[RMDB]
RNA sequence: GGGAACGACUCGAGUAGAGUCGAAAAGCGAGCGAAAGGGGACCGAUGGCCAAACCGGCGAGCGGGCGGGCGCCAGCCUAUACCGCCGCCGGGGUUGCAGGGCCUCCCGCCCGGGAGCUGGCGCUCCGCGCACUACUUUGUUCGCAAAGUAGUGCGCAAAAGAAACAACAACAACAAC
Reactivity to DMS in 0.01 (KOAc 150mM, MgCl2 10mM, bicine 150mM(pH8.5), 24C), signal-to-noise 2, nucleotides 027 to 126: g000c010g010a130g010c020g040a050a130a090g000g000g020g030a140c100c040g010a140u030g000g040c050c060a000a050a230c000c010g000g000c010g000a120g000c000g030g000g010c300g000g000g000c000g030c170c200a010g000c000c040u000a170u040a200c050c030g020c030c000g020c010c010g000g000g000g000u040u000g000c150a130g000g020g000c050c000u000c010c010c040g000c000c030c010g010g040g010a060g010c010u010g000g000c040g000c030u000c040c080
Reactivity to 2A3 in 0.01 (KOAc 150mM, MgCl2 10mM, bicine 150mM(pH8.5), 24C), signal-to-noise 2, nucleotides 027 to 126: g040c010g030a020g000c020g070a120a050a010g030g000g010g020a040c040c020g100a120u160g060g000c030c000a110a070a030c020c000g010g010c000g010a060g020c000g020g020g000c110g020g000g000c020g000c010c020a020g000c000c000u080a080u160a130c000c000g020c020c000g000c000c010g000g000g000g000u050u040g030c050a030g040g050g000c000c000u020c010c000c000g010c000c010c000g000g010g010a040g010c030u040g050g000c030g000c010u010c010c020

An RNA of 177 nucleotides, treated with DMS and 2A3 and read out base by base. For DMS, 2,680 sequencing reads were counted.